[RMDB]
RNA sequence: GGGAACGACUCGAGUAGAGUCGAAAAGAUAUGGACUCAUUGAGGGAGUCCCCACCAUUGCUUGAUACUCGGAAACGAGUAUCAAGCAAUGGUGGUGGACAUCGAUCUCACGGUGAGUCCUAAGUCACGCUAAAUAAAACUUCGGUUUUAUUUAGCGAAAAGAAACAACAACAACAAC
Reactivity to DMS in 0.01 (KOAc 150mM, MgCl2 10mM, bicine 150mM(pH8.5), 24C), signal-to-noise 3, nucleotides 027 to 126: g010a070u010a300u000g000g010a020c010u000c000a010u010u000g010a060g000g000g000a060g010u000c000c000c000c000a020c000c000a000u000u000g020c000u020u000g000a010u000a010c000u000c010g030g010a120a150a230c000g000a010g000u000a010u000c000a000a000g010c010a010a000u000g020g020u000g010g000u010g000g000a000c010a140u020c250g020a290u000c010u000c000a080c300g010g000u020g000a030g010u000c000c010u000a010a070g000u000c040a230
Reactivity to 2A3 in 0.01 (KOAc 150mM, MgCl2 10mM, bicine 150mM(pH8.5), 24C), signal-to-noise 2, nucleotides 027 to 126: g040a010u110a060u300g000g000a000c000u000c000a010u020u090g000a060g050g050g010a020g010u030c020c000c020c000a000c020c000a010u000u020g010c010u000u050g000a000u040a020c000u010c050g080g050a000a140a130c000g070a010g020u020a010u000c010a020a030g000c010a000a030u000g000g010u000g030g000u010g020g000a000c000a070u190c050g260a150u060c020u020c030a040c130g040g030u010g010a000g020u030c000c000u000a050a030g030u010c040a010